[RMDB]
RNA sequence: GGGAACGACUCGAGUAGAGUCGAAAAAAAGUAUGAGAGUGUGAAAUGUCUAUUAAGAAUAAAAAACAGUCUGAAACAUCAUUGAGACGUUUCAGACUGGAUAUAAAAUGAAUUUCAUUUAUAGCACGGAGGAAAGAUCAUUCGUGAUCUUUCCUCCAAAAGAAACAACAACAACAAC
Reactivity to 2A3 in 0.01 (KOAc 150mM, MgCl2 10mM, bicine 150mM(pH8.5), 24C), signal-to-noise 1, nucleotides 027 to 126: a000a030a000g080u050a100u060g070a070g040a030g130u040g030u000g060a110a050a010u090g070u070c000u000a080u060u070a080a040g040a070a160u110a150a130a000a000a000a000c010a000g000u000c000u000g000a000a000a000c010a000u110c050a010u090u300g130a230g000a160c010g000u000u000u000c000a020g000a000c000u000g000g000a000u000a000u030a010a060a000a040u060g040a010a000u020u010u020c060a060u000u040u080a080u080a080g030c110a010c110
Reactivity to DMS in 0.01 (KOAc 150mM, MgCl2 10mM, bicine 150mM(pH8.5), 24C), signal-to-noise 1, nucleotides 027 to 126: a010a100a100g000u000a090u030g000a030g000a070g000u000g000u040g010a050a000a040u030g020u020c040u020a200u000u000a120a020g010a110a050u030a030a070a080a180a050a240c000a030g020u030c000u030g030a000a010a000c000a030u020c020a210u030u010g040a130g020a020c110g010u000u000u000c000a000g000a000c000u020g030g000a050u010a030u020a040a020a080a020u080g000a170a080u010u010u030c030a090u030u000u000a050u000a030g030c110a010c210